[RMDB]
RNA sequence: GGGAACGACUCGAGUAGAGUCGAAAAUUGAAGGUAGACAUGAACUUGCAAACAGAGCUUGUGACAUAUUGGAAAAGUAUAUGAACAUCAAAGUUUUGAGCGAUGAUGGGUUUUCUCUGGUACACCGCAGGGGAUGUACUUUCGAGUACAUCCCCUGAAAAGAAACAACAACAACAAC
Reactivity to DMS in 0.01 (KOAc 150mM, MgCl2 10mM, bicine 150mM(pH8.5), 24C), signal-to-noise 4, nucleotides 027 to 126: u000u010g000a100a080g000g010u000a040g000a100c080a080u000g010a080a060c070u010u010g020c050a040a160a160c070a040g010a080g000c070u010u000g000u000g000a120c030a040u000a020u010u000g010g000a070a040a060a110g010u010a010u000a030u000g000a080a150c070a100u000c020a020a040a190g010u000u000u000u010g010a100g030c070g020a130u000g000a080u010g000g010g010u000u000u000u000c040u000c030u000g000g000u000a050c100a070c080c090g000
Reactivity to 2A3 in 0.01 (KOAc 150mM, MgCl2 10mM, bicine 150mM(pH8.5), 24C), signal-to-noise 2, nucleotides 027 to 126: u080u070g060a040a000g030g020u060a050g000a060c040a040u060g040a090a040c020u070u120g000c030a070a090a020c010a020g010a020g070c010u080u090g050u000g030a000c010a010u060a080u020u130g050g040a070a030a050a050g120u030a040u000a020u130g060a070a010c010a000u090c070a080a040a010g000u000u000u050u160g020a010g070c010g000a010u040g040a050u050g050g000g000u000u020u130u000c020u030c010u000g060g030u060a010c040a030c120c030g080